[RMDB]
RNA sequence: GGGAACGACUCGAGUAGAGUCGAAAACGACUUACCUUCGGGUAAGUCGACAUAGGUGAGUUCAUCGGAUAGCUGCCUAGGUGAGAUCAUCGGAUAGCUGCCACAUGUAACGGUUCGCCGUUACAAAGACCAUCAACAUGUUCGCAUGUUGAUGGUCAAAAGAAACAACAACAACAAC
Reactivity to 2A3 in 0.01 (KOAc 150mM, MgCl2 10mM, bicine 150mM(pH8.5), 24C), signal-to-noise 3, nucleotides 027 to 126: c010g010a000c000u010u000a010c000c000u000u070c240g010g000g020u000a000a010g000u010c000g010a000c020a060u150a020g070g000u070g090a070g040u070u080c060a060u060c100g050g030a090u050a140g040c060u060g040c030c030u080a130g010g010u030g030a100g010a060u170c010a020u040c020g000g010a060u060a050g040c040u050g070c030c020a080c030a100u080g000u000a000a000c000g010g010u030u050c220g000c050c000g000u000u000a020c030a000a040a000
Reactivity to DMS in 0.01 (KOAc 150mM, MgCl2 10mM, bicine 150mM(pH8.5), 24C), signal-to-noise 3, nucleotides 027 to 126: c030g010a020c000u010u000a020c000c010u000u020c170g000g030g030u010a000a000g020u000c000g010a020c080a070u000a090g000g000u000g000a040g000u010u010c040a050u000c060g000g000a120u000a080g010c060u000g010c020c020u010a120g020g010u000g000a120g020a080u000c010a000u020c030g000g000a090u010a040g010c130u010g000c020c040a070c190a150u000g010u000a000a010c000g000g000u010u010c240g010c000c010g000u000u000a000c000a060a090a090
Structure probing data (2A3 and DMS) for a 177-nucleotide construct. For 2A3 the reverse transcriptase was SuperScript II with manganese.